[RMDB]
RNA sequence: GGGAACGACUCGAGUAGAGUCGAAAAGCUUUAGCUAUUGCUGUAACACUUCCUAAAGUUGGUAUUCACUUUGGUGGUAUGGACUUAGGUCAGUUCGUAGUCAUGUUCCUAGGUGGAAUGAUUGGUGGCUUAUAUCCCGAUUCGUCGGGAUAUAAGCAAAAGAAACAACAACAACAAC
Reactivity to DMS in 0.01 (KOAc 150mM, MgCl2 10mM, bicine 150mM(pH8.5), 24C), signal-to-noise 4, nucleotides 027 to 126: g010c030u000u010u000a080g030c070u010a090u000u000g020c020u000g010u000a080a140c130a090c090u000u000c030c020u000a030a050a060g030u000u000g010g000u000a040u010u000c040a060c030u000u010u010g020g020u000g000g000u000a030u000g010g010a040c050u000u000a070g000g000u000c110a070g010u000u010c060g000u000a040g000u000c050a060u010g010u000u000c020c020u000a110g020g010u010g020g000a080a060u010g000a100u000u000g020g010u010g000
Reactivity to 2A3 in 0.01 (KOAc 150mM, MgCl2 10mM, bicine 150mM(pH8.5), 24C), signal-to-noise 2, nucleotides 027 to 126: g020c030u100u180u100a020g020c020u090a090u160u190g030c020u010g050u060a050a020c010a020c020u010u050c010c000u030a060a070a030g070u060u090g100g000u050a030u040u270c030a050c010u100u060u220g060g000u030g050g030u020a080u090g100g030a000c000u030u030a010g030g000u050c030a030g000u050u120c060g010u010a020g000u010c030a060u110g040u050u010c000c000u020a050g000g170u110g110g030a110a050u070g060a120u040u160g040g060u070g070
Chemical mapping of a 177-nucleotide RNA with DMS and 2A3. 2A3 adducts were read by reverse transcription with SuperScript II with manganese. DMS adducts were read by reverse transcription with MarathonRT. The 2A3 profile rests on 1,623 reads. The RNA was probed in 150 mM KOAc, 10 mM MgCl2 and 150 mM bicine (pH 8.5) at 24 C. It was measured as part of the RMDB library OK2TST. Reactivities are given for positions 27 through 126.